[RMDB]
RNA sequence: GGGAACGACUCGAGUAGAGUCGAAAAGCACAUCCGGGGGUGCGCACCCGCCAGCUUUACGACGCGGUGCUGCAAUCACGGCGGGAAACCGGCGGGCCAGCGCAGCCGUAGUCGGUCAGGUUAGGGGACAGUCCAGUAUGUUCGCAUACUGGACUGUAAAAGAAACAACAACAACAAC
Reactivity to DMS in 0.01 (KOAc 150mM, MgCl2 10mM, bicine 150mM(pH8.5), 24C), signal-to-noise 3, nucleotides 027 to 126: g010c090a100c110a100u000c030c030g000g010g010g010g020u000g000c000g010c020a170c000c000c010g010c010c000a050g010c070u010u010u000a050c030g010a040c030g000c050g020g020u000g010c170u030g010c200a120a020u000c000a040c030g000g010c000g010g010g010a020a040a040c020c010g030g000c020g010g010g000c060c110a070g000c020g000c020a030g000c020c000g020u010a060g000u010c060g010g010u010c060a070g010g000u000u000a090g000g000g000g000
Reactivity to 2A3 in 0.01 (KOAc 150mM, MgCl2 10mM, bicine 150mM(pH8.5), 24C), signal-to-noise 1, nucleotides 027 to 126: g020c000a040c010a150u030c030c000g030g030g030g000g050u000g000c020g000c000a050c000c000c000g020c010c010a020g000c020u070u070u090a130c140g070a010c010g030c020g110g000u000g020c160u200g160c080a010a030u100c010a000c050g110g000c040g020g000g010a010a020a030c010c000g030g010c050g000g020g020c080c070a030g020c000g020c000a010g000c000c010g030u000a050g050u060c010g010g020u040c040a040g040g040u030u100a030g010g040g020g000

Source: RMDB library OK2TST, as collected in RNAgym. The record gives the reactivity of an RNA of 177 nucleotides to DMS and 2A3. The DMS profile rests on 3,704 reads. Conditions: 150 mM KOAc, 10 mM MgCl2 and 150 mM bicine (pH 8.5), 24 C.